[RMDB]
RNA sequence: GGGAACGACUCGAGUAGAGUCGAAAAUCAGUCUAUUGCCGACGAUUCGGAGGAGAUCUUCUUUGGAGACACUGGGGUUUCCAAGAAUCCAGUAGAACUAGUUACAGGGUGGUUCACUAGCUGGAAAAUGCACUGCUAUCUUCGGAUAGCAGUGCAUAAAAGAAACAACAACAACAAC
Reactivity to DMS in 0.01 (KOAc 150mM, MgCl2 10mM, bicine 150mM(pH8.5), 24C), signal-to-noise 1, nucleotides 027 to 126: u010c060a110g010u010c060u010a190u000u000g010c140c090g000a080c110g020a130u010u000c030g030g000a280g000g000a040g000a030u000c050u010u010c030u000u000u010g010g000a120g010a150c010a130c080u030g000g000g020g000u000u000u040c000c030a070a240g000a050a080u000c010c030a010g000u000a090g030a010a120c030u000a060g000u010u020a110c170a090g000g020g030u000g000g040u000u020c010a100c160u010a150g010c000u000g020g000a030a080a050
The record gives the reactivity of an RNA of 177 nucleotides to DMS. The RNA was probed in 150 mM KOAc, 10 mM MgCl2 and 150 mM bicine (pH 8.5) at 24 C.